[RMDB]
RNA sequence: GGGAACGACUCGAGUAGAGUCGAAAAGCGACUUAUCAUGAGCAACAUCGCGAUGAACCUGGUCCUGGGCGCGAACGUCUGCGACGUAUGGCGUUGCCAAUGGAAGAUGAAGCGCUGGUACUGUUGCUACGUACGAUCAAUUCGUUGAUCGUACGUAAAAAGAAACAACAACAACAAC
Reactivity to DMS in 0.01 (KOAc 150mM, MgCl2 10mM, bicine 150mM(pH8.5), 24C), signal-to-noise 5, nucleotides 027 to 126: g010c010g020a050c020u000u000a030u000c040a050u000g010a100g010c010a030a280c030a040u000c020g010c070g020a100u010g010a120a110c060c030u000g010g010u000c090c080u000g010g000g020c030g010c080g010a070a030c020g000u000c010u000g010c260g000a080c030g010u010a070u000g010g020c050g020u000u000g000c030c050a080a050u010g000g010a110a130g010a040u000g000a060a300g010c010g010c010u000g000g000u000a020c150u010g020u010u000g010c020
Reactivity to 2A3 in 0.01 (KOAc 150mM, MgCl2 10mM, bicine 150mM(pH8.5), 24C), signal-to-noise 4, nucleotides 027 to 126: g000c010g040a050c020u060u070a040u090c030a070u170g070a010g090c020a000a010c000a020u040c020g020c040g100a070u120g060a050a090c010c020u030g040g050u060c020c030u040g030g000g010c020g030c040g070a030a050c010g000u000c050u180g080c070g070a020c000g060u090a120u160g110g000c040g030u030u120g060c030c000a090a080u130g050g010a080a030g010a030u030g020a030a010g010c030g010c040u020g010g010u060a050c080u050g020u040u050g020c020